[RMDB]
RNA sequence: GGGAACGACUCGAGUAGAGUCGAAAAAGGGUAGGAUGACAGGGCUACUCAUUGAUUAGCUUUUUCAUACUUUUUGGAUGACCCACCCCAAAUGGUCCCAUCUAAGGCUCAUCUGAUGUCCAUUUAGGCUUUUUCAACAUCUCAAGCCCAGCGAUUCCAAUGUGGAAGUGUUCGCACUUCCACAUUGAAAAGAAACAACAACAACAAC
Reactivity to DMS in 0.01 (KOAc 150mM, MgCl2 10mM, bicine 150mM(pH8.5), 24C), signal-to-noise 1, nucleotides 027 to 156: a100g000g030g040u000a050g010g010a050u020g020a110c130a100g030g020g010c000u000a040c100u000c060a160u000u020g010a120u010u000a040g020c000u020u000u010u000u020c060a090u000a050c060u000u010u000u010u000g010g000a110u010g000a160c020c010c050a090c200c020c030c050a040a070a050u000g000g000u010c020c050c000a110u000c060u010a050a060g020g030c060u010c030a070u000c020u010g000a080u000g000u000c050c050a080u000u000u000a050g010g000c090u010u000u010u000u000c030a070a050c010a050u000c010u000c030a030a100g000c030c000c030a110g030c080g010a120u000u000c020
Reactivity to 2A3 in 0.01 (KOAc 150mM, MgCl2 10mM, bicine 150mM(pH8.5), 24C), signal-to-noise 4, nucleotides 027 to 156: a010g020g000g000u050a040g010g040a010u030g000a020c020a030g010g000g020c000u010a020c020u010c070a300u090u240g050a080u040u010a010g000c000u000u020u030u050u040c030a030u110a240c050u050u100u130u160u160g060g020a050u090g030a040c010c000c000a020c010c000c000c000a000a060a090u070g010g010u010c010c020c000a030u000c040u080a090a070g080g020c040u040c070a100u030c060u060g040a020u030g030u010c020c000a030u030u030u030a050g020g000c080u000u050u030u070u130c090a060a080c010a090u000c050u020c080a080a030g000c000c010c010a020g040c040g110a050u100u030c030
Conditions: 150 mM KOAc, 10 mM MgCl2 and 150 mM bicine (pH 8.5), 24 C. The record gives the reactivity of an RNA of 207 nucleotides to DMS and 2A3. It was measured as part of the RMDB library OK3TST. Reactivities are given for positions 27 through 156. For DMS, 2,841 sequencing reads were counted.